[RMDB]
The record gives the reactivity of an RNA of 177 nucleotides to 2A3. The RNA was probed in 150 mM KOAc, 10 mM MgCl2 and 150 mM bicine (pH 8.5) at 24 C. Source: RMDB library RFM100, as collected in RNAgym. 2A3 adducts were read by reverse transcription with SuperScript II with manganese.
RNA sequence: GGGAACGACUCGAGUAGAGUCGAAAAAUUAAGAAGCAAAUCUCAUAAACUCCUUUCAGCCUUCUGACUCCUGGAGUAAUGAAGGCUGCUUUUUUCGUUACACCCUUCCCCGGCAGCGCCGGUGGCAACCAGAGAUGUUCUUCGGAACAUCUCUGGUAAAAGAAACAACAACAACAAC
Reactivity to 2A3 in 0.01 (KOAc 150mM, MgCl2 10mM, bicine 150mM(pH8.5), 24C), signal-to-noise 4, nucleotides 027 to 126: a000u230u190a130a010g030a050a020g010c000a020a070a160u040c030u020c000a030u140a080a170a140c010u040c000c000u050u130u060c020a050g030c070c040u160u260c010u100g040a070c080u080c090c180u150g080g020a010g000u060a060a060u070g000a000a010g050g000c030u000g000c000u050u000u010u010u010u040c060g050u050u040a080c010a050c040c000c000u020u050c020c000c020c000g010g000c010a150g060c050g040c140c000g000g030u050g020g040c020a020